Structure probing data (2A3 and DMS) for a 177-nucleotide construct. The reactions ran in a buffer of 150 mM KOAc, 10 mM MgCl2 and 150 mM bicine (pH 8.5), at 24 C. It was measured as part of the RMDB libraries RFM100 and RFMREP. DMS adducts were read by reverse transcription with MarathonRT. For 2A3 the reverse transcriptase was SuperScript II with manganese.
RNA sequence: GGGAACGACUCGAGUAGAGUCGAAAAUGCAAGUAGUGCUAUUGUUGGAAUCACCGUACCUAUUUAGGUUUACGCUCCAAGAUCGGUGGAUAGCAGCCCUAUCAAUAUCUAGGAGAACUGUGCUAUGUAUUGAAAAUUCGUUCGCGAAUUUUCAAUAAAAAGAAACAACAACAACAAC
Reactivity to 2A3 in 0.01 (KOAc 150mM, MgCl2 10mM, bicine 150mM(pH8.5), 24C), signal-to-noise 5, nucleotides 027 to 126: u160g020c060a060a020g070u110a020g070u120g080c020u040a030u120u070g110u060u080g040g050a080a110u080c000a010c030c010g030u050a040c000c010u060a090u190u200u220a010g020g000u010u090u060a030c060g000c010u000c010c010a020a020g010a040u040c020g030g050u030g050g050a020u030a010g020c020a010g020c000c010c000u050a040u040c060a060a080u040a040u160c020u020a020g000g020a040g020a020a050c090u100g020u020g070c020u050a050u200g050
Reactivity to DMS in 0.01 (KOAc 150mM, MgCl2 10mM, bicine 150mM(pH8.5), 24C), signal-to-noise 4, nucleotides 027 to 126: u020g010c060a050a100g030u010a030g010u000g000c030u000a070u020u010g030u000u000g010g020a120a140u040c020a030c060c020g000u020a070c030c020u010a130u020u010u040a020g000g000u010u020u010a050c070g010c030u010c010c030a050a070g000a020u000c060g010g050u010g000g020a040u000a030g010c070a160g010c170c050c030u000a040u030c040a080a070u010a050u000c040u000a060g020g000a040g010a080a120c070u010g010u000g020c060u010a050u010g020